[RMDB]
RNA sequence: GGGAACGACUCGAGUAGAGUCGAAAAAUGGUAGUUAGUCUACUCGCUAUCCUAGUUACUUUGGAGUAAUCUAAAGUGUGUGUAGACGGGCGAAAGUCUGUAAAAUACUGGGGACAUAGGGUCAACAAGAACUAGUAGACCUUCGGGUCUACUAGAACAUUAUGCUACACUUCGGUGUAGCAUAAUGAAAAGAAACAACAACAACAAC
Reactivity to 2A3 in 0.01 (KOAc 150mM, MgCl2 10mM, bicine 150mM(pH8.5), 24C), signal-to-noise 4, nucleotides 027 to 156: a000u100g030g010u030a040g030u120u050a030g050u040c010u020a000c020u020c020g010c010u040a070u140c000c030u010a040g040u030u050a030c020u050u030u060g030g040a040g010u100a120a100u030c010u020a020a000a010g020u050g000u000g000u010g000u050a030g010a050c000g000g000g020c030g050a100a020a010g020u040c040u040g060u100a020a060a060a010u120a070c020u020g000g000g000g020a020c030a080u110a070g020g000g050u060c040a020a030c020a150a020g070a090a020c010u000a000g000u000a000g000a000c010c000u020u030c150g070g000g000u000c000u000a000c000u000a000g000a000a000
Reactivity to DMS in 0.01 (KOAc 150mM, MgCl2 10mM, bicine 150mM(pH8.5), 24C), signal-to-noise 3, nucleotides 027 to 156: a050u000g000g020u000a040g020u000u000a090g020u000c040u000a040c010u000c050g020c040u010a090u000c020c030u000a120g010u000u000a020c010u000u000u000g020g010a040g000u010a170a200u010c010u000a010a020a050g020u000g010u010g000u010g020u010a090g010a070c030g020g030g020c000g010a120a090a160g010u010c030u000g020u010a050a070a040a090u000a030c040u000g040g000g010g010a080c030a100u000a100g020g020g000u000c040a060a080c070a080a090g010a100a210c010u000a010g010u000a010g010a020c000c000u000u000c300g000g020g010u000c000u000a000c000u000a010g000a030a110
An RNA of 207 nucleotides, treated with 2A3 and DMS and read out base by base. The reactions ran in a buffer of 150 mM KOAc, 10 mM MgCl2 and 150 mM bicine (pH 8.5), at 24 C. DMS adducts were read by reverse transcription with MarathonRT. Values cover nucleotides 27 to 156. Source: RMDB library M2RFPK, as collected in RNAgym.